[RMDB]
RNA sequence: GGGAACGACUCGAGUAGAGUCGAAAAGAGGGCAGUAUCUUUGUCGAAAAGAACUGCACCGCGCCGGCAAAAUGAAUGAAUAAAGAUAAUCUGCCUUGAUCCUUGCAGAAGGACUGGGACAGAGGGACUCGUAAGACAUUUUCGAAUGUCUUACGAGAAAAGAAACAACAACAACAAC
Reactivity to DMS in 0.01 (KOAc 150mM, MgCl2 10mM, bicine 150mM(pH8.5), 24C), signal-to-noise 5, nucleotides 027 to 126: g020a190g000g000g000c000a020g000u000a090u000c010u000u000u000g000u050c260g000a130a020a010a020g000a020a050c000u000g000c000a080c010c010g000c080g010c020c010g020g040c080a070a060a090a040u030g000a070a080u010g010a090a080u010a050a110a070g000a100u020a100a100u000c000u000g000c000c000u010u000g000a100u000c010c000u000u000g000c300a090g000a020a010g000g000a010c000u000g000g000g000a080c000a010g000a020g000g020g010a180
Reactivity to 2A3 in 0.01 (KOAc 150mM, MgCl2 10mM, bicine 150mM(pH8.5), 24C), signal-to-noise 8, nucleotides 027 to 126: g160a050g000g020g000c020a020g020u070a300u100c010u020u040u040g140u220c160g070a020a020a000a000g000a000a010c010u010g000c020a100c010c010g000c010g070c000c020g070g060c080a080a090a040a060u160g080a090a050u100g050a050a050u210a160a100a010g120a040u130a120a030u030c000u010g000c000c000u100u040g070a210u040c000c010u000u030g040c050a020g080a210a010g010g000a000c000u010g020g000g070a140c010a010g020a040g010g010g020a030